[RMDB]
RNA sequence: GGGAACGACUCGAGUAGAGUCGAAAAUCGCCUGCACUCACCGACGUGUUGGCGGCCGGGUCGGUGCCGAUAACGUGGUCCGGUGGGAUUGUCGAGUCCGGCUUCUGCAAGGUGCGGAUUUUGAAGCGUGUCGGAACGCGUUCGCGCGUUCCGACACAAAAGAAACAACAACAACAAC
Reactivity to 2A3 in 0.01 (KOAc 150mM, MgCl2 10mM, bicine 150mM(pH8.5), 24C), signal-to-noise 1, nucleotides 027 to 126: u100c000g140c000c000u000g010c060a170c000u030c000a000c000c000g070a000c000g000u010g000u000u070g030g000c000g080g000c070c000g210g050g000u110c220g000g070u100g040c010c000g000a000u060a140a000c000g010u000g300g120u110c060c000g000g000u060g150g010g000a130u080u060g170u090c000g000a000g050u000c000c000g010g030c140u130u000c060u060g040c000a070a080g060g010u170g120c000g080g000a010u000u000u000u300g210a130a070g130c060

Structure probing data (2A3) for a 177-nucleotide construct. Reactivities are given for positions 27 through 126. The reactions ran in a buffer of 150 mM KOAc, 10 mM MgCl2 and 150 mM bicine (pH 8.5), at 24 C. As a SHAPE reagent, 2A3 marks flexible, mostly unpaired nucleotides at the ribose 2'-OH. For 2A3 the reverse transcriptase was SuperScript II with manganese.